The record gives the reactivity of an RNA of 177 nucleotides to DMS and 2A3. 2A3 adducts were read by reverse transcription with SuperScript II with manganese. The RNA was probed in 150 mM KOAc, 10 mM MgCl2 and 150 mM bicine (pH 8.5) at 24 C. DMS adducts were read by reverse transcription with MarathonRT. For DMS, 12,953 sequencing reads were counted.
RNA sequence: GGGAACGACUCGAGUAGAGUCGAAAAGGUCUGCCAACUUCUGCUGCGCGUAAAUAUCUUAGUGCCUUUGUAACAGGCAUGUACAAUGGGCUUGCUGUAGCCAAUCAUGCAGAGACGCUGCUCAGCCACUGCAUACUUACUUCGGUAAGUAUGCAGUAAAAGAAACAACAACAACAAC
Reactivity to DMS in 0.01 (KOAc 150mM, MgCl2 10mM, bicine 150mM(pH8.5), 24C), signal-to-noise 6, nucleotides 027 to 126: g000g020u010c020u010g000c050c020a080a100c080u000u010c020u030g010c030u000g000c030g020c060g020u020a050a090a070u020a050u000c060u020u010a090g010u000g020c010c020u000u010u010g020u020a110a130c180a040g000g000c050a030u020g010u030a100c190a060a070u020g000g000g010c020u000u000g020c040u000g010u010a090g020c060c060a070a100u020c050a060u030g020c070a060g020a090g000a130c110g020c010u020g000c030u000c060a070g020c070c100
Reactivity to 2A3 in 0.01 (KOAc 150mM, MgCl2 10mM, bicine 150mM(pH8.5), 24C), signal-to-noise 9, nucleotides 027 to 126: g050g010u020c020u030g050c010c000a070a050c060u040u040c030u060g050c010u020g010c030g000c000g040u080a030a150a050u190a080u100c070u090u110a040g010u040g040c010c000u050u070u150g190u090a110a050c030a080g010g000c000a010u050g020u020a030c060a080a150u140g050g000g000c010u030u080g020c040u130g030u070a010g000c010c000a020a050u100c050a040u150g050c030a010g020a020g010a060c040g010c020u030g000c010u010c020a010g010c010c010